An RNA of 207 nucleotides, treated with DMS and 2A3 and read out base by base. For 2A3, 6,642 sequencing reads were counted. For 2A3 the reverse transcriptase was SuperScript II with manganese. Source: RMDB library PDB130, as collected in RNAgym. The RNA was probed in 150 mM KOAc, 10 mM MgCl2 and 150 mM bicine (pH 8.5) at 24 C.
[RMDB]
RNA sequence: GGGAACGACUCGAGUAGAGUCGAAAAAUACUCCACCAAAAUAUGCUCUAGAAUCAACAUCCAUCCCUACAACAAACAUGUGAUGCGCUCACACAAACAUACCUAAGAUCGCAAUUAAUAUCAUUGAAUAUAUCAUUGCAACCGCACUGAACACACACUCUCAAGAAUAGUUCGCUAUUCUUGAGAGAAAAGAAACAACAACAACAAC
Reactivity to DMS in 0.01 (KOAc 150mM, MgCl2 10mM, bicine 150mM(pH8.5), 24C), signal-to-noise 2, nucleotides 027 to 156: a110u000a030c030u010c020c000a120c050c040a070a040a070a140u000a080u020g000c040u000c050u000a090g010a110a110u000c040a050a070c020a080u000c020c040a090u010c020c010c010u000a080c050a080a120c080a090a060a080c100a070u010g000u000g010a070u000g020c110g030c040u000c090a060c050a070c030a080a070a040c050a050u010a080c060c040u000a080a140g010a050u000c040g010c020a020a050u000u010a050a060u000a040u000c070a190u010u040g000a140a090u000a060u000a030u010c030a050u000u010g020c010a050a060c020c010g020c050a070c040u020g010a040a070c020a040c080a050c060a130
Reactivity to 2A3 in 0.01 (KOAc 150mM, MgCl2 10mM, bicine 150mM(pH8.5), 24C), signal-to-noise 7, nucleotides 027 to 156: a000u080a040c030u020c020c010a050c030c000a050a060a090a060u150a080u120g020c020u040c030u070a060g080a110a110u100c040a050a050c020a070u010c040c000a030u020c020c010c010u080a050c030a120a010c030a080a170a020c040a070u070g040u030g030a040u050g020c040g020c070u020c020a020c010a000c020a030a100a020c020a060u120a080c010c020u040a040a030g020a060u090c030g010c020a000a020u050u070a070a030u060a010u070c060a110u050u240g030a240a010u060a000u010a020u060c030a010u000u030g000c020a050a030c040c010g020c030a020c060u090g120a200a010c050a000c000a000c000a000